Description: Source: RMDB library OK2TST, as collected in RNAgym. The record gives the reactivity of an RNA of 177 nucleotides to 2A3 and DMS. Values cover nucleotides 27 to 126. DMS adducts were read by reverse transcription with MarathonRT. For DMS, 1,371 sequencing reads were counted. The RNA was probed in 150 mM KOAc, 10 mM MgCl2 and 150 mM bicine (pH 8.5) at 24 C.
RNA sequence: GGGAACGACUCGAGUAGAGUCGAAAAAAAGGACGGAGAAAAGAUUUACGUCCCAAAAAUUCCGUCAGAUAGUGAAGUUGAGAACUUCCUCAACGCGGUUAGGGAGAAUAUUCGCAUAGCCAAGCGAAUGCCAUGAGUGAUUCGUCACUCAUGGCAUAAAAGAAACAACAACAACAAC
Reactivity to 2A3 in 0.01 (KOAc 150mM, MgCl2 10mM, bicine 150mM(pH8.5), 24C), signal-to-noise 1, nucleotides 027 to 126: a000a000a000g050g030a030c040g030g080a130g080a020a140a040a020g040a030u000u150u090a050c060g030u040c000c010c030a000a180a000a000a000u090u000c010c000g030u000c020a000g050a120u250a000g190u170g120a150a070g020u070u090g150a180g010a090a090c080u090u000c040c010u030c010a040a000c020g000c020g140g000u070u020a020g010g050g070a090g030a110a050u090a060u120u000c020g010c060a100u040a030g050c030c040a020a000g090c000g000a050
Reactivity to DMS in 0.01 (KOAc 150mM, MgCl2 10mM, bicine 150mM(pH8.5), 24C), signal-to-noise 2, nucleotides 027 to 126: a140a050a120g010g000a010c010g000g000a080g020a070a090a140a140g000a170u000u020u020a090c130g010u000c000c000c010a030a070a080a080a070u000u020c000c000g000u000c040a130g020a100u000a070g020u020g010a100a080g020u000u000g000a050g010a090a090c130u000u020c060c000u000c050a010a070c040g020c130g020g010u010u000a060g000g000g000a030g000a060a170u010a080u000u000c040g000c000a070u010a070g010c100c120a120a090g020c020g000a050